[RMDB]
RNA sequence: GGGAACGACUCGAGUAGAGUCGAAAAGAUAUGGAUUGCCAGGCAGCGAAGAACUCGGAAACGAGGGAGCUGCUGGUCAAUCCUAAGUCAAAACUGAUCGUUUGCGGUUCGCCGCAAACGAUCAGAACAGAGUGUUACACUUCGGUGUAACACUCUGAAAAGAAACAACAACAACAAC
Reactivity to DMS in 0.01 (KOAc 150mM, MgCl2 10mM, bicine 150mM(pH8.5), 24C), signal-to-noise 1, nucleotides 027 to 126: g000a040u000a300u020g010g020a020u010u000g010c010c000a090g010g010c000a020g000c000g030a060a150g000a130a270c000u000c000g000g000a130a090a170c010g010a050g010g000g010a140g000c000u010g000c000u000g010g000u020c050a000a010u010c010c000u000a010a050g020u000c030a110a020a090a150c000u000g000a010u000c010g000u000u000u000g010c000g000g000u010u020c230g080c050c050g010c000a010a000a000c000g000a010u000c000a000g000a050a190
Reactivity to 2A3 in 0.01 (KOAc 150mM, MgCl2 10mM, bicine 150mM(pH8.5), 24C), signal-to-noise 1, nucleotides 027 to 126: g000a020u070a000u150g000g000a010u000u020g020c020c030a100g220g300c020a020g030c010g130a300a000g040a070a060c010u000c000g010g000a090a060a020c000g000a010g020g000g020a040g030c020u000g000c010u010g020g020u100c000a000a000u020c000c010u020a160a010g040u000c000a000a000a120a210c000u000g000a000u020c000g010u080u000u010g020c040g000g140u010u170c300g010c130c020g000c110a000a000a000c000g000a000u000c010a010g000a000a000